[RMDB]
RNA sequence: GGGAACGACUCGAGUAGAGUCGAAAACGCUGGGAGAUCUCCAUAGAAUGUAGAUAGUGGAGCAAUCCUGAAGCGCGCACGGGAUUGCGAUGAAACUAUUAUUAUAGCUAUGGAGGAUCUCCUGUGCUGAAGCGCGCACGGCAACCGAAAGGUGCGACGGAAGCGUAUUCUUCGGAAUACGCUUCCGAAAAGAAACAACAACAACAAC
Reactivity to 2A3 in 0.01 (KOAc 150mM, MgCl2 10mM, bicine 150mM(pH8.5), 24C), signal-to-noise 1, nucleotides 027 to 156: c000g000c010u060g000g000g000a040g040a030u030c010u010c000c020a010u010a020g200a300a300u110g020u010a030g000a110u000a000g030u020g000g000a000g060c000a000a000u000c010c000u000g030a120a060g000c000g000c000g010c010a010c020g050g020g020a000u000u020g010c020g140a270u010g000a000a000a000c010u000a000u030u010a130u100u090a200u150a080g040c000u000a000u010g010g010a030g000g050a000u000c000u010c000c010u000g010u000g040c010u000g010a080a020g020c010g020c020g000c000a000c000g030g050c080a070a090c010c010g010a070a040a100g040g000u040g010c020g010a020